[RMDB]
This 177-nucleotide RNA was probed chemically with 2A3 and DMS. High DMS reactivity at an A or C suggests that its Watson-Crick edge is free. The RNA was probed in 150 mM KOAc, 10 mM MgCl2 and 150 mM bicine (pH 8.5) at 24 C.
RNA sequence: GGGAACGACUCGAGUAGAGUCGAAAAGAAAGGGACCCAGUGCGCCCCACGCAGCCAGUCGACCCCAGGCAUGCUUUUGCAUGCCCGACUGAGGGGAGCUGCGGCACUGAGGGGAGGUCCCGAAAGAAUUAGGACUACGAUUCGUCGUAGUCCUAAUAAAAGAAACAACAACAACAAC
Reactivity to 2A3 in 0.01 (KOAc 150mM, MgCl2 10mM, bicine 150mM(pH8.5), 24C), signal-to-noise 2, nucleotides 027 to 126: g040a050a080a050g000g000g010a010c060c030c010a000g020u020g010c000g120c020c030c020c000a020c000g020c000a000g020c030c010a020g020u040c030g080a170c010c000c010c000a000g020g040c000a010u010g020c030u210u260u240u300g000c000a010u000g000c020c010c000g000a000c020u040g010a090g050g040g010g020a030g000c000u010g000c000g050g000c000a000c020u010g030a110g040g050g030g030a030g050g000u000c000c000c020g000a030a040a000g090a020
Reactivity to DMS in 0.01 (KOAc 150mM, MgCl2 10mM, bicine 150mM(pH8.5), 24C), signal-to-noise 4, nucleotides 027 to 126: g000a070a130a200g000g000g000a030c000c010c020a020g010u000g010c020g020c070c020c020c050a300c010g010c000a000g020c030c020a050g000u010c020g010a150c070c010c030c300a140g000g000c000a010u000g000c000u000u000u010u010g020c000a000u000g010c010c000c000g000a030c040u000g000a130g010g010g000g000a290g010c010u000g000c000g010g000c020a000c010u010g010a100g020g010g010g010a150g010g000u010c000c000c000g010a050a070a080g000a110